[RMDB]
RNA sequence: GGGAACGACUCGAGUAGAGUCGAAAAGAGGAUGGGCUUGAUUUGAGUCUGCAAAGGUGGUCAGGGAGCAGAAGAAUGUCCUAUCCCAUAUUUUUGGCUUGUAUCCAGUAAAUAGGUGAUGGUGAGCCUCGAAGCAGCAUUUCGAUGCUGCUUCGAGAAAAGAAACAACAACAACAAC
Reactivity to 2A3 in 0.01 (KOAc 150mM, MgCl2 10mM, bicine 150mM(pH8.5), 24C), signal-to-noise 1, nucleotides 027 to 126: g050a000g030g040a030u040g030g020g000c050u080u090g040a140u130u040u230g060a060g070u020c030u030g000c040a030a070a070g110g030u110g010g030u100c050a060g050g010g020a000g000c000a010g000a100a000g050a100a020u120g050u060c010c000u010a070u010c000c000c090a050u080a070u140u130u010u050u030g020g010c020u010u000g030u100a020u000c000c010a010g000u110a080a120a000u150a140g030g070u100g030a020u070g000g080u060g070a010g010c030
Reactivity to DMS in 0.01 (KOAc 150mM, MgCl2 10mM, bicine 150mM(pH8.5), 24C), signal-to-noise 2, nucleotides 027 to 126: g010a100g010g000a040u000g010g000g010c070u010u020g010a120u000u000u000g020a100g020u000c040u020g020c030a060a070a120g010g030u000g010g000u000c050a070g020g010g000a210g000c080a040g000a090a060g010a120a030u000g000u010c040c010u000a070u000c020c000c010a110u000a000u000u000u000u000u000g000g010c050u010u020g000u010a140u000c030c020a060g010u000a060a060a090u010a070g010g000u020g020a030u000g010g010u000g010a060g000c120
Chemical mapping of a 177-nucleotide RNA with 2A3 and DMS. DMS adducts were read by reverse transcription with MarathonRT. For 2A3 the reverse transcriptase was SuperScript II with manganese. For DMS, 1,508 sequencing reads were counted. It was measured as part of the RMDB library OK2TST.